Record summary
An RNA of 177 nucleotides, treated with 2A3 and DMS and read out base by base. The 2A3 profile rests on 1,763 reads. Conditions: 150 mM KOAc, 10 mM MgCl2 and 150 mM bicine (pH 8.5), 24 C.

RNA sequence: GGGAACGACUCGAGUAGAGUCGAAAACAUGUGUACUUCGGUACACAUGAAAUGACCGCCAUUAUUGGCUAUGGCUACACGGACGGCCGGGUCAAAUGCCGAAAAUCGUUGCGUUCGCGCAACGAAACAGUUGGCAAGUGUUCGCACUUGCCAACUGAAAAGAAACAACAACAACAAC
Reactivity to 2A3 in 0.01 (KOAc 150mM, MgCl2 10mM, bicine 150mM(pH8.5), 24C), signal-to-noise 1, nucleotides 027 to 126: c000a010u000g000u010g030u000a000c010u050u060c170g080g010u000a000c000a010c000a000u010g040a010a000a000u090g000a000c000c000g110c010c030a150u210u110a110u210u300g000g000c020u080a110u300g000g020c010u030a010c120a030c090g020g060a020c020g000g000c000c000g010g000g000u000c010a000a000a060u140g000c000c010g000a040a020a000a020u030c010g000u010u020g010c010g020u040u040c230g070c010g000c050a020a020c010g030a010a040a010
Reactivity to DMS in 0.01 (KOAc 150mM, MgCl2 10mM, bicine 150mM(pH8.5), 24C), signal-to-noise 1, nucleotides 027 to 126: c000a020u010g010u000g020u000a000c000u000u000c200g010g030u000a000c000a010c000a000u010g000a030a120a070u000g000a000c020c010g000c000c010a080u010u010a130u000u030g000g020c000u010a010u000g000g010c010u010a120c140a070c010g010g010a010c020g020g000c000c000g020g000g000u000c010a060a110a040u000g010c030c010g000a280a030a080a080u010c030g000u000u010g020c010g040u030u000c250g010c010g030c010a040a010c000g010a000a100a110
Values cover nucleotides 27 to 126.